[RMDB]
RNA sequence: GGGAACGACUCGAGUAGAGUCGAAAAUUCAUAUGACGUUGCUGACGAGCGACAAAGCUCUGUGUUCCUGAAUGGGAGUAGGUUUGUGUGGUGGUAUAAUUUAGUAACAGCAUAGACUGUCUAUAGCGACGUGAAUAGUGUUCGCACUAUUCACGUCAAAAGAAACAACAACAACAAC
Reactivity to 2A3 in 0.01 (KOAc 150mM, MgCl2 10mM, bicine 150mM(pH8.5), 24C), signal-to-noise 2, nucleotides 027 to 126: u070u000c000a040u070a010u270g050a040c050g030u090u070g040c000u040g080a080c050g140a050g030c020g060a070c070a050a110a000g000c010u000c000u050g040u040g040u110u040c000c000u000g080a090a010u110g000g000g000a050g060u100a060g060g060u040u050u090g080u030g000u010g060g080u040g040g090u090a140u070a090a210u110u110u130a020g070u020a030a010c020a020g000c020a020u110a110g090a150c030u040g010u060c020u080a140u070a060g090c070
Reactivity to DMS in 0.01 (KOAc 150mM, MgCl2 10mM, bicine 150mM(pH8.5), 24C), signal-to-noise 4, nucleotides 027 to 126: u010u030c060a110u010a090u000g010a090c100g030u000u000g000c030u010g000a100c150g000a110g010c030g000a060c100a070a130a140g020c010u000c020u000g030u000g000u000u000c000c010u000g010a090a080u010g010g000g000a040g000u010a050g010g010u000u000u000g000u010g020u000g010g010u000g020g010u000a060u010a050a110u000u000u000a060g010u000a030a040c040a060g010c030a120u000a100g000a120c070u020g000u000c050u000a100u010a110g000c210
This 177-nucleotide RNA was probed chemically with 2A3 and DMS. It was measured as part of the RMDB library OK2TRN. For 2A3, 1,150 sequencing reads were counted. Values are in units of 0.01, from 0 to 300, in steps of 10. The RNA was probed in 150 mM KOAc, 10 mM MgCl2 and 150 mM bicine (pH 8.5) at 24 C.